[RMDB]
RNA sequence: GGGAACGACUCGAGUAGAGUCGAAAAAAAACCACAAUGAGAUACCACCUCACACCUGUUAGGGUGGCUAUUAAAAAAAAGGGAAAUUAUGAGUGUUGGGGAUGUGGAGAAAUUGAAGCUCGGGUGCAUUGCUGGUGGGAAAGUAGGGUGGUGCAGACAUUUAAUCACUGUUCGCAGUGAUUAAAUGAAAAGAAACAACAACAACAAC
Reactivity to 2A3 in 0.01 (KOAc 150mM, MgCl2 10mM, bicine 150mM(pH8.5), 24C), signal-to-noise 2, nucleotides 027 to 156: a000a000a000a000c090c040a090c060a070a040u200g030a030g000a100u090a080c000c000a000c000c000u050c000a060c000a030c070c030u130g050u170u090a110g020g000g010u000g010g000c010u130a060u250u250a090a070a020a020a030a040a040a050g130g000g040a090a070a010u290u130a080u150g070a060g060u060g000u080u100g010g050g000g000a070u100g030u070g050g010a020g070a060a100a080u080u140g060a040a010g020c060u050c040g010g020g040u060g000c010a010u010u070g040c030u050g010g010u090g030g020g000a020a120a040g040u090a030g030g000g000u050g000g000u030g010c020a020g020a060
Reactivity to DMS in 0.01 (KOAc 150mM, MgCl2 10mM, bicine 150mM(pH8.5), 24C), signal-to-noise 1, nucleotides 027 to 156: a020a020a080a120c040c010a060c100a090a050u000g010a160g000a200u000a000c050c010a130c000c020u010c020a140c060a140c080c020u030g020u000u000a130g060g000g020u000g000g010c040u000a080u000u000a020a000a000a000a020a000a100a240g000g000g000a080a020a050u000u000a060u000g000a090g030u010g050u000u000g000g000g020g000a100u000g020u000g010g010a120g010a040a040a130u000u000g000a080a090g020c040u010c040g040g040g020u010g000c030a130u000u010g060c040u000g000g000u000g000g010g000a030a000a080g000u000a110g000g000g020u000g030g020u010g020c050a090g030a130
Conditions: 150 mM KOAc, 10 mM MgCl2 and 150 mM bicine (pH 8.5), 24 C. Structure probing data (2A3 and DMS) for a 207-nucleotide construct. Values cover nucleotides 27 to 156. The data come from the RNA Mapping Database (RMDB), library OK3TST. The 2A3 profile rests on 984 reads. DMS adducts were read by reverse transcription with MarathonRT.